[RMDB]
RNA sequence: GGGAACGACUCGAGUAGAGUCGAAAACGCUGGGCCAUUCGUCUCAGGCGAGGGAGCUCUACUCCUCUGAAGCGCGCACGGAGGAGUAGAGCGACGAUCUCGUAUUGGAGACGAAAGUGGCCUGUGCUGAAGCGCGCACGGCAACCGAAAGGUGCGAUCGAUUAAUCCACUUCGGUGGAUUAAUCGAAAAAGAAACAACAACAACAAC
Reactivity to 2A3 in 0.01 (KOAc 150mM, MgCl2 10mM, bicine 150mM(pH8.5), 24C), signal-to-noise 1, nucleotides 027 to 156: c060g010c090u200g010g010g000c000c000a030u010u000c000g030u030c000u010c000a020g010g050c000g000a020g010g000g000a000g000c000u030c000u010a000c000u000c010c000u000c000u020g140a240a050g000c000g000c030g080c050a040c020g030g000a000g000g000a000g000u000a000g000a000g000c030g000a000c000g010a000u000c000u000c010g000u000a220u130u290g280g020a010g010a020c000g010a010a000a010g040u030g000g000c000c000u000g020u040g000c050u220g030a050a000g000c000g000c010g040c030a010c000g000g000c020a080a290c000c000g020a070a070a010g040g010u000g000c020g010a040